RNA sequence: GGGAACGACUCGAGUAGAGUCGAAAAGGAUCACUAAUACUCCGAAUAGCGUCAGCCGAAUACAGACGGUUGGGGUUAUAAGCUCGGUGAAGUCGUGCGAAGCACACCCUAACGCUUAAUGGCGAGGCCCUCUGUAACAGUUCGCUGUUACAGAGGGAAAAGAAACAACAACAACAAC
Reactivity to 2A3 in 0.01 (KOAc 150mM, MgCl2 10mM, bicine 150mM(pH8.5), 24C), signal-to-noise 2, nucleotides 027 to 126: g050g000a120u080c010a030c050u060a030a050u060a080c040u000c010c000g060a010a020u030a050g020c130g300u030c010a010g010c000c000g020a020a020u200a160c100a050g180a100c020g010g010u020u000g020g000g010g000u020u000a040u000a080a030g040c000u000c030g010g000u010g050a040a020g040u100c070g010u000g020c000g120a120a020g040c030a050c000a030c020c010c020u050a160a010c040g010c050u070u180a180a020u190g000g020c000g020a010g020g030
Reactivity to DMS in 0.01 (KOAc 150mM, MgCl2 10mM, bicine 150mM(pH8.5), 24C), signal-to-noise 1, nucleotides 027 to 126: g020g020a080u010c070a050c020u000a090a160u000a180c050u010c050c010g000a120a160u000a050g020c010g000u010c010a050g040c010c000g000a140a080u000a140c300a180g000a030c000g000g010u000u000g000g000g020g030u000u000a010u000a100a200g000c150u000c100g040g000u000g000a080a030g000u000c130g000u000g020c030g000a090a120g050c110a070c040a160c010c010c020u000a080a080c040g000c020u000u030a030a040u010g040g000c030g000a140g020g000
The data come from the RNA Mapping Database (RMDB), library RFMREP. An RNA of 177 nucleotides, treated with 2A3 and DMS and read out base by base. For 2A3, 945 sequencing reads were counted. The reactions ran in a buffer of 150 mM KOAc, 10 mM MgCl2 and 150 mM bicine (pH 8.5), at 24 C. 2A3 adducts were read by reverse transcription with SuperScript II with manganese.